Chemical mapping of a 207-nucleotide RNA with 2A3 and DMS.
High DMS reactivity at an A or C suggests that its Watson-Crick edge is free.
Conditions: 150 mM KOAc, 10 mM MgCl2 and 150 mM bicine (pH 8.5), 24 C.
Reactivities are given for positions 27 through 156.
For 2A3 the reverse transcriptase was SuperScript II with manganese.
The data come from the RNA Mapping Database (RMDB), library OK3TST.
RNA sequence: GGGAACGACUCGAGUAGAGUCGAAAAUCUUAAACUGGAGGGCUCCAUGGAGAUCAUUGCGAGUGACUCCCCCAGAAUGUCCAUCUGUUGACAGGAGCCAGGCUGGCUGCAUACGAAUUAGCUAAGGAGCUUAUUAUAUAUCCAGAGUCCUACCGUGGAGAAAUACCUAUUUCGAUAGGUAUUUCUCAAAAGAAACAACAACAACAAC
Reactivity to 2A3 in 0.01 (KOAc 150mM, MgCl2 10mM, bicine 150mM(pH8.5), 24C), signal-to-noise 2, nucleotides 027 to 156: u000c010u020u090a080a020a110c050u080g000g000a010g000g020g000c010u020c070c080a090u070g020g010a070g060a100u070c030a050u130u200g100c100g040a080g040u060g120a150c040u040c030c000c020c030c000a020g010a070a090u150g030u040c070c060a080u040c080u110g070u170u100g120a020c060a030g020g000a000g030c000c040a020g010g010c010u030g060g020c030u060g000c020a040u050a150c010g020a160a140u110u010a020g010c010u030a020a190g110g010a030g130c000u050u000a020u120u020a040u000a010u010a010u080c000c000a000g000a040g030u020c000c000u020a120c020c000g010u040g000
Reactivity to DMS in 0.01 (KOAc 150mM, MgCl2 10mM, bicine 150mM(pH8.5), 24C), signal-to-noise 2, nucleotides 027 to 156: u000c050u010u000a040a100a120c070u020g030g010a100g040g000g000c000u010c040c020a090u010g020g010a140g010a080u000c040a090u000u000g020c130g010a130g020u000g010a060c020u000c010c000c070c000c030a160g020a110a120u000g020u000c040c070a170u020c060u020g010u020u020g030a100c080a100g000g020a050g040c030c020a050g000g020c050u000g000g000c040u000g060c040a200u010a140c100g000a160a110u000u000a040g000c020u020a080a220g010g010a100g010c040u000u000a060u000u000a120u000a180u010a110u000c020c020a050g000a100g010u000c020c020u010a080c050c040g020u000g010